[RMDB]
RNA sequence: GGGAACGACUCGAGUAGAGUCGAAAAGAUAUGGAAGGACAUUUGCGCUGAGGAGGUCGGAAACGACUACCCACCCUCAGAACUACGCACCAUCCUUCCUAAGUCAAAAUCCUCCUUCGGGAGGAAACGAUGACGCAACGUUCGCGUUGCGUCAUCGAAAAGAAACAACAACAACAAC
Reactivity to DMS in 0.01 (KOAc 150mM, MgCl2 10mM, bicine 150mM(pH8.5), 24C), signal-to-noise 1, nucleotides 027 to 126: g040a070u000a230u000g000g070a000a010g040g000a000c260a280u000u000u020g000c000g000c050u000g000a000g000g010a040g090g000u000c000g020g000a120a020a140c000g000a000c000u000a050c040c010c120a300c040c000c090u000c000a000g000a160a020c090u000a300c040g000c000a010c300c180a230u000c000c000u000u000c000c000u000a050a140g040u000c160a180a140a120a120u000c050c000u000c000c000u050u050c070g020g000g000a050g000g000a000a000a100
Conditions: 150 mM KOAc, 10 mM MgCl2 and 150 mM bicine (pH 8.5), 24 C. Chemical mapping of a 177-nucleotide RNA with DMS. Source: RMDB library TTRDEL, as collected in RNAgym.